[RMDB]
The record gives the reactivity of an RNA of 177 nucleotides to DMS and 2A3.
DMS adducts were read by reverse transcription with MarathonRT.
The 2A3 profile rests on 14,605 reads.
The DMS profile rests on 4,594 reads.
Reactivities are given for positions 27 through 126.
The data come from the RNA Mapping Database (RMDB), library TTRDES.
RNA sequence: GGGAACGACUCGAGUAGAGUCGAAAAGAUAUGGAUCGGCGUGUACCUUCAACAGCUACGAUCGGAAACGAUCGUAGACAUGAAGACACCCGAUCCUAAGUCAAAACGCCCUACUUCGGUAGGGCGACCAUAUGAGACUCUUCGGAGUCUCAUAUGGAAAAGAAACAACAACAACAAC
Reactivity to DMS in 0.01 (KOAc 150mM, MgCl2 10mM, bicine 150mM(pH8.5), 24C), signal-to-noise 5, nucleotides 027 to 126: g010a050u010a300u010g010g000a000u000c000g020g010c290g020u000g010u010a110c300c040u000u000c030a020a150c300a160g000c010u000a010c000g010a010u000c000g000g010a090a080a240c010g010a000u000c000g020u000a010g000a020c110a140u010g000a050a000g010a090c010a020c000c000c000g010a000u000c000c000u000a000a090g000u000c030a080a060a120a240c050g020c010c000c000u000a010c000u010u030c220g020g010u000a000g020g000g020c000g010a010
Reactivity to 2A3 in 0.01 (KOAc 150mM, MgCl2 10mM, bicine 150mM(pH8.5), 24C), signal-to-noise 5, nucleotides 027 to 126: g010a020u070a040u160g010g000a000u000c010g030g030c210g080u020g030u210a300c030c000u060u080c060a200a180c040a210g040c010u000a000c020g010a000u010c010g010g020a080a080a020c010g010a000u000c010g000u010a010g010a010c000a050u140g030a060a020g040a020c000a000c000c010c010g000a000u000c000c000u000a010a000g000u000c020a000a020a110a130c010g000c010c000c000u010a010c000u020u070c270g140g000u010a000g000g010g010c000g000a000